[RMDB]
The record gives the reactivity of an RNA of 177 nucleotides to 2A3 and DMS.
RNA sequence: GGGAACGACUCGAGUAGAGUCGAAAAGACACACUCACACUCUCACACUGUCAGAGUGUCUCAGAGUCACUGACUGUCUCUCAGAGUGUCUCAGUGUCUGAGUGAGUGUCUGAGAGUCACUCAGUCAAUAGUACUUUCCUUUCGAGGAAAGUACUAUAAAAGAAACAACAACAACAAC
Reactivity to 2A3 in 0.01 (KOAc 150mM, MgCl2 10mM, bicine 150mM(pH8.5), 24C), signal-to-noise 6, nucleotides 027 to 126: g010a000c010a000c010a000c040u060c020a010c000a000c020u010c000u010c000a010c000a030c070u110g030u180c060a030g020a010g080u070g030u010c010u020c020a070g010a010g080u090c020a010c060u050g070a030c020u030g010u030c000u000c000u000c040a020g010a030g070u170g140u030c010u000c020a050g030u050g080u100c060u060g020a030g030u020g010a040g030u080g080u010c010u010g020a020g000a000g050u020c000a010c020u010c000a000g060u040c000a030
Reactivity to DMS in 0.01 (KOAc 150mM, MgCl2 10mM, bicine 150mM(pH8.5), 24C), signal-to-noise 8, nucleotides 027 to 126: g010a040c020a040c030a100c040u000c120a120c030a030c010u000c010u000c110a050c040a070c080u010g000u010c250a060g000a050g030u000g000u000c040u010c110a090g000a080g010u010c090a070c070u010g000a060c090u000g010u000c010u000c010u000c050a050g000a040g020u010g010u000c020u000c010a040g000u000g010u000c090u000g000a040g020u000g000a050g020u010g010u000c010u000g000a060g010a050g010u000c020a030c100u000c000a030g010u000c120a110
2A3 adducts were read by reverse transcription with SuperScript II with manganese. DMS adducts were read by reverse transcription with MarathonRT.